[RMDB]
RNA sequence: GGGAACGACUCGAGUAGAGUCGAAAAGAUAUGGAGGCUUGGGCAGCAACAGCUCGGAAACGAGACAUGCUGUCCCACGGGCCUCCUAAGUCAAACGACUUACAUAACUUCGGUUAUGUAAGUCGAACCGUUAUCAUAGGUUCGCCUAUGAUAACGGAAAAGAAACAACAACAACAAC
Reactivity to 2A3 in 0.01 (KOAc 150mM, MgCl2 10mM, bicine 150mM(pH8.5), 24C), signal-to-noise 3, nucleotides 027 to 126: g010a010u080a040u160g000g010a000g010g000c060u070u060g020g010g010c010a000g000c010a010a090c050a160g020c010u010c010g010g000a080a090a020c010g000a020g020a030c020a030u040g000c000u010g060u300c000c010c000a020c100g030g030g000c000c000u000c000c000u000a000a000g020u010c010a080a030a060c010g010a000c000u000u010a010c000a000u010a000a010c000u050u070c270g080g000u010u000a000u000g000u010a000a000g010u000c000g000a000a000
Reactivity to DMS in 0.01 (KOAc 150mM, MgCl2 10mM, bicine 150mM(pH8.5), 24C), signal-to-noise 5, nucleotides 027 to 126: g010a030u020a300u000g000g000a000g000g010c010u000u000g020g000g010c010a020g000c000a030a050c240a140g010c000u000c000g010g000a080a080a220c020g010a020g000a050c070a190u000g000c010u000g000u020c010c010c190a040c300g030g010g000c000c000u000c000c010u000a010a060g010u000c040a100a090a240c020g000a010c000u000u000a010c000a000u000a000a000c000u000u010c210g010g000u000u000a000u000g000u000a000a000g010u000c000g000a020a090
Source information: Chemical mapping of a 177-nucleotide RNA with 2A3 and DMS. As a SHAPE reagent, 2A3 marks flexible, mostly unpaired nucleotides at the ribose 2'-OH. The RNA was probed in 150 mM KOAc, 10 mM MgCl2 and 150 mM bicine (pH 8.5) at 24 C. Source: RMDB library TTRDEL, as collected in RNAgym. DMS adducts were read by reverse transcription with MarathonRT.